RNA sequence: GGGAACGACUCGAGUAGAGUCGAAAAUGCAAGGCACUAGUGGACAGAGUGAAACUGCCAUUCUUUUUGGUCCCAGGGCCAUUGCCCUGUGUUGUCACCAGAUCAGGUGUUUCCCAGAUGGAGACCGAUGAUAGGGAUGGUUCGCCAUCCCUAUCAUAAAAGAAACAACAACAACAAC
Reactivity to 2A3 in 0.01 (KOAc 150mM, MgCl2 10mM, bicine 150mM(pH8.5), 24C), signal-to-noise 2, nucleotides 027 to 126: u050g000c010a010a040g060g010c000a000c070u050a030g020u050g150g020a110c040a010g080a040g030u150g030a270a100a000c040u040g020c030c010a060u090u010c040u090u170u070u040u080g020g000u000c030c020c000a070g000g060g000c030c030a090u050u250g020c010c020c030u030g020u050g020u040u090g100u060c000a010c020c030a050g020a270u100c060a040g000g020u000g000u010u010u040c000c000c010a020g040a070u150g050g030a090g030a050c010c100g050
Reactivity to DMS in 0.01 (KOAc 150mM, MgCl2 10mM, bicine 150mM(pH8.5), 24C), signal-to-noise 5, nucleotides 027 to 126: u000g020c030a040a080g000g010c010a110c180u000a080g030u000g010g010a080c030a040g000a060g000u010g010a060a080a150c060u010g000c030c040a070u010u000c060u000u000u000u010u010g010g010u000c020c030c090a100g010g000g010c060c180a080u010u000g000c010c020c010u000g020u010g010u000u000g000u000c020a030c020c030a090g010a130u010c160a070g000g000u000g010u000u000u000c000c010c010a100g000a080u010g000g000a080g000a050c110c110g000